[RMDB]
RNA sequence: GGGAACGACUCGAGUAGAGUCGAAAAGCUGGUAAUGCUGUGAAUUCAACAAUAUCGAGUAGUGACAGCAGGGCACCGUCGAAACGAAUUAGUGUUCGAGUCAUCGCUUUGGAGUAACCGGAACAAAACUAAUGCGUUACUUCGGUAACGCAUUAGUAAAAGAAACAACAACAACAAC
Reactivity to DMS in 0.01 (KOAc 150mM, MgCl2 10mM, bicine 150mM(pH8.5), 24C), signal-to-noise 6, nucleotides 027 to 126: g010c010u000g020g020u010a050a040u020g020c000u000g010u010g000a130a120u020u010c050a090a070c180a070a120u040a120u010c070g000a080g010u000a060g000u030g000a040c030a060g000c050a080g000g000g020c040a040c040c110g000u000c080g000a080a050a080c080g010a100a070u020u030a110g020u010g000u000u010c010g000a090g010u020c050a050u000c090g000c070u000u020u010g000g010a110g000u000a060a070c030c010g000g000a090a060c130a060a040a070
Reactivity to 2A3 in 0.01 (KOAc 150mM, MgCl2 10mM, bicine 150mM(pH8.5), 24C), signal-to-noise 6, nucleotides 027 to 126: g030c030u050g050g100u150a110a070u130g000c030u010g010u030g080a110a120u110u120c060a080a030c060a160a120u140a110u230c060g030a020g070u080a020g010u060g080a050c020a030g010c040a060g030g040g000c030a020c050c020g050u100c060g030a080a070a080c030g030a040a070u120u080a180g060u060g020u100u020c020g010a010g050u040c010a040u060c050g010c040u060u030u110g060g010a070g000u070a090a080c040c010g020g010a080a020c070a080a080a010